[RMDB]
RNA sequence: GGGAACGACUCGAGUAGAGUCGAAAAGAAAAGGUGUGCGUCUCACACAGACGGAAAACAAAAGGACCGCAGACCGGUCGUCUGGAAAAUAAAAGGGUCUCUAGCAGACCGCUAGGAAAGAAAGAAAGGGUUAGUAUGAGUUCGCUCAUACUAACCCAAAAGAAACAACAACAACAAC
Reactivity to DMS in 0.01 (KOAc 150mM, MgCl2 10mM, bicine 150mM(pH8.5), 24C), signal-to-noise 2, nucleotides 027 to 126: g000a110a070a110a050g030g010u000g040u000g000c030g000u000c000u000c110a220c250a070c070a060g000a000c010g000g000a080a070a110a110c150a030a130a070a220g000g010a040c000c020g000c160a080g000a200c130c060g020g000u000c010g010u000c020u000g010g000a060a030a080a070u140a000a040a060a030g000g000g020u000c030u000c000u000a090g000c060a020g000a040c220c080g020c030u030a010g000g000a090a080a020g020a120a100a040g030a110a150a060
Reactivity to 2A3 in 0.01 (KOAc 150mM, MgCl2 10mM, bicine 150mM(pH8.5), 24C), signal-to-noise 1, nucleotides 027 to 126: g140a030a130a010a010g010g090u040g000u000g040c100g060u000c020u030c060a140c000a000c040a000g080a030c110g080g070a030a090a020a020c030a000a140a040a030g030g040a000c000c040g000c000a000g050a100c000c000g000g020u100c000g030u010c000u060g050g100a020a060a060a030u290a020a170a020a000g090g000g040u040c010u000c000u000a020g030c040a010g130a080c030c000g000c010u000a000g010g060a110a020a020g110a040a030a040g090a000a050a040